[RMDB]
RNA sequence: GGGAACGACUCGAGUAGAGUCGAAAAGACGUUUUGUAAUGUCAGGCGCUCAGGCCCAAUGUCACGCGGCAGAUAACCAUAAAUAUCCCCCAGAUUGCGCCCGACCAUGGCUUGUACCAGCGAAUCACUAUGUUAUUGGUUUCGACCAAUAACAUAGAAAAGAAACAACAACAACAAC
Reactivity to 2A3 in 0.01 (KOAc 150mM, MgCl2 10mM, bicine 150mM(pH8.5), 24C), signal-to-noise 3, nucleotides 027 to 126: g010a000c030g010u000u030u140u160g130u100a100a090u100g030u060c020a030g040g010c020g020c010u040c050a030g070g000c000c020c020a030a050u110g040u080c010a010c140g040c030g010g030c020a020g020a110u090a090a110c040c030a090u130a170a180a020u160a160u140c000c020c000c010c000a010g010a060u050u100g010c020g000c000c000c000g000a000c010c010a030u060g020g000c000u040u030g010u030a040c000c000a020g020c000g050a010a010u060c010a020
Reactivity to DMS in 0.01 (KOAc 150mM, MgCl2 10mM, bicine 150mM(pH8.5), 24C), signal-to-noise 8, nucleotides 027 to 126: g010a070c060g020u000u000u010u010g010u020a060a060u010g010u000c020a080g010g010c030g010c050u000c120a110g020g000c030c010c030a080a080u010g010u000c070a090c130g010c110g020g000c030a070g010a050u000a060a120c080c060a100u010a050a070a090u010a120u000c010c000c010c040c050a110g000a090u000u010g010c060g010c010c020c040g000a050c050c110a060u000g000g010c030u000u000g010u000a100c040c030a070g010c050g010a090a090u010c130a170
This 177-nucleotide RNA was probed chemically with 2A3 and DMS. Conditions: 150 mM KOAc, 10 mM MgCl2 and 150 mM bicine (pH 8.5), 24 C. Source: RMDB library OK2TST, as collected in RNAgym. High 2A3 reactivity points to a flexible backbone, as in loops and unpaired stretches.